[RMDB]
RNA sequence: GGGAACGACUCGAGUAGAGUCGAAAACACUAGAGAGUAAGCAGACUGCUUCAGUGUCAUUUCUUCCCACUGGUGGUCUUUACACUCAGCUUCAAGCAGUCACCCUGCUCCUUUCAAUCUCAGGAAAGUACCAGCUAAUAUUCGUAUUAGCUGGUACAAAAGAAACAACAACAACAAC
Reactivity to 2A3 in 0.01 (KOAc 150mM, MgCl2 10mM, bicine 150mM(pH8.5), 24C), signal-to-noise 6, nucleotides 027 to 126: c050a010c050u110a030g030a000g000a000g140u070a070a020g030c060a000g070a080c020u020g010c010u110u050c040a020g000u000g010u030c020a030u050u100u060c020u050u040c020c020c050a080c100u090g030g000u010g000g000u020c000u040u070u060a020c030a010c020u050c050a030g020c040u160u130c050a050a020g000c010a000g030u030c010a020c020c000c000u020g010c010u050c000c020u090u160u050c050a120a140u030c040u020c060a030g110g110a090a070a030
Reactivity to DMS in 0.01 (KOAc 150mM, MgCl2 10mM, bicine 150mM(pH8.5), 24C), signal-to-noise 5, nucleotides 027 to 126: c110a100c090u010a090g010a090g020a080g020u010a070a060g020c260a090g010a030c030u000g010c010u000u000c080a030g020u000g010u000c090a130u000u010u010c110u010u000c130c030c070a120c150u010g010g030u000g010g010u010c040u000u000u000a040c070a060c020u000c050a110g010c110u000u010c120a060a070g010c020a020g020u010c050a080c090c070c020u000g020c010u000c030c020u000u000u000c070a070a100u000c060u000c040a130g000g000a080a090a130

An RNA of 177 nucleotides, treated with 2A3 and DMS and read out base by base.
For 2A3 the reverse transcriptase was SuperScript II with manganese.
Reactivities are rounded to 0.1 and cut off at 0 and 3.
Values cover nucleotides 27 to 126.
DMS adducts were read by reverse transcription with MarathonRT.
DMS (dimethyl sulfate) methylates the pairing face of unpaired adenines and cytosines.
The data come from the RNA Mapping Database (RMDB), library OK2TST.